An RNA of 177 nucleotides, treated with DMS and 2A3 and read out base by base. Values cover nucleotides 27 to 126. The 2A3 profile rests on 17,207 reads. The data come from the RNA Mapping Database (RMDB), library OK1LIB.
[RMDB]
RNA sequence: GGGAACGACUCGAGUAGAGUCGAAAAGGAACUAUGUUCUGGCAUGAAGCCUCCACGUGCGUGCGAAAGCACCCGGAAACGGCAGAGCAUAGUUCCGAGCUGAAGGAGGCACGGCUCAAAAUAAAAAGGUUCUACAACUGUUCGCAGUUGUAGGACCAAAAGAAACAACAACAACAAC
Reactivity to DMS in 0.01 (KOAc 150mM, MgCl2 10mM, bicine 150mM(pH8.5), 24C), signal-to-noise 3, nucleotides 027 to 126: g000g010a000a010c000u010a000u000g010u000u000c010u000g000g020c000a000u000g010a050a100g000c010c000u010c020c010a300c020g010u010g010c040g030u010g020c000g020a120a110a160g000c000a000c000c000c000g000g000a090a090a190c000g000g030c000a000g000a050g000c000a010u000a000g000u000u000c000c000g000a020g010c020u010g000a050a110g040g000a020g000g040c000a300c010g000g000c000u000c000a220a080a100a090u130a040a140a090a140a110
Reactivity to 2A3 in 0.01 (KOAc 150mM, MgCl2 10mM, bicine 150mM(pH8.5), 24C), signal-to-noise 5, nucleotides 027 to 126: g000g000a000a000c000u000a000u000g000u010u000c000u000g000g010c000a000u010g050a090a030g000c000c000u000c000c000a030c010g010u000g000c000g000u000g010c010g060a150a030a040g000c010a010c000c000c000g020g000a060a070a020c010g000g000c000a000g000a000g010c000a000u000a000g000u000u000c000c000g000a000g000c000u030g040a150a090g010g000a000g000g000c040a010c010g000g000c000u000c010a100a110a020a020u300a050a080a010a010a000